RNA sequence: GGGAACGACUCGAGUAGAGUCGAAAAAUUGUGCGGUCUCUGAGAGAGGAGAACCUGUCUGAGACAGCUUACCGCUUUUCAUAGUGGCUCUCUGAGAGACUCUGAGGCUCCUCUCGUUCCCAACCAAUCUUAGGUGUAGAUUCGUCUACACCUAAGAAAAAGAAACAACAACAACAAC
Reactivity to DMS in 0.01 (KOAc 150mM, MgCl2 10mM, bicine 150mM(pH8.5), 24C), signal-to-noise 2, nucleotides 027 to 126: a120u010u010g040u000g010c100g000g010u000c010u010c020u000g000a030g000a040g000a030g000g000a170g000a110a110c290c010u000g000u000c010u000g010a210g010a040c030a020g010c050u000u000a120c040c020g000c000u000u000u000u010c120a050u020a020g020u000g000g010c000u000c000u000c020u000g000a050g010a030g020a000c000u000c030u010g010a170g020g020c010u010c010c010u010c010u020c000g000u000u000c000c000c000a090a060c210c120a080a120
Reactivity to 2A3 in 0.01 (KOAc 150mM, MgCl2 10mM, bicine 150mM(pH8.5), 24C), signal-to-noise 3, nucleotides 027 to 126: a000u270u200g070u090g060c090g020g010u010c000u000c000u150g020a010g000a000g000a010g040g000a070g010a040a020c020c020u000g000u020c070u210g160a120g010a210c010a010g000c010u050u080a110c000c010g030c070u050u050u100u150c230a160u220a200g000u010g030g000c000u020c010u000c000u040g050a000g010a000g000a010c000u020c000u010g040a040g010g010c000u010c010c010u020c000u000c000g000u010u000c000c000c030a020a010c000c000a010a030
This 177-nucleotide RNA was probed chemically with DMS and 2A3. For DMS, 1,477 sequencing reads were counted. DMS adducts were read by reverse transcription with MarathonRT. For 2A3 the reverse transcriptase was SuperScript II with manganese. The 2A3 profile rests on 3,227 reads. Conditions: 150 mM KOAc, 10 mM MgCl2 and 150 mM bicine (pH 8.5), 24 C.